Source: RMDB library RNAMAK, as collected in RNAgym. Chemical mapping of a 207-nucleotide RNA with 2A3 and DMS. Conditions: 150 mM KOAc, 10 mM MgCl2 and 150 mM bicine (pH 8.5), 24 C.
RNA sequence: GGGAACGACUCGAGUAGAGUCGAAAAGCGUACUACGCUCAUCGAUCUUGCUUGUCAGGCUCACCAUAGCAUAUCCCAAAUAGGAUAUGCUUAAGUGAGCCUUGGAUUUAGCAAGGGAGAGCGUAUCGCAAAACAACCUCUCUUCGGAGAGGUUGAAUCUUCAUAGUACGUUCGCGUACUAUGAAGAAAAAGAAACAACAACAACAAC
Reactivity to 2A3 in 0.01 (KOAc 150mM, MgCl2 10mM, bicine 150mM(pH8.5), 24C), signal-to-noise 2, nucleotides 027 to 156: g000c000g000u010a110c050u020a010c010g020c000u010c010a250u270c040g050a050u030c000u000u000g000c000u000u010g000u000c000a020g010g000c000u000c010a000c000c030a060u070a030g030c000a000u000a000u000c000c010c050a200a210a070u300a080g000g010a000u010a020u000g000c020u010u010a020a010g000u000g000a000g000c000c000u010u010g000g000a000u030u090u180a000g000c000a000a000g070g020g000a030g110a000g000c000g000u000a050u240c000g010c010a000a030a000a000c010a000a000c020c000u000c000u000c000u010u070c140g010g000a000g000a000g000g000u000u000g000a000a000
Reactivity to DMS in 0.01 (KOAc 150mM, MgCl2 10mM, bicine 150mM(pH8.5), 24C), signal-to-noise 2, nucleotides 027 to 156: g010c000g010u000a050c080u000a010c000g030c010u000c010a230u000c170g010a050u010c000u000u000g010c000u010u000g000u000c000a050g000g000c000u000c000a000c000c010a180u010a020g010c000a020u000a000u010c000c000c010a060a190a230u010a050g010g000a040u000a000u000g020c000u000u000a090a020g010u000g010a010g020c010c000u000u000g010g020a040u000u000u000a010g030c030a040a010g010g000g010a050g000a030g020c000g000u000a000u000c040g050c030a070a080a110a210c030a010a010c000c010u000c000u000c010u000u010c300g030g000a020g000a010g020g010u000u000g000a020a050

The 2A3 profile rests on 1,393 reads.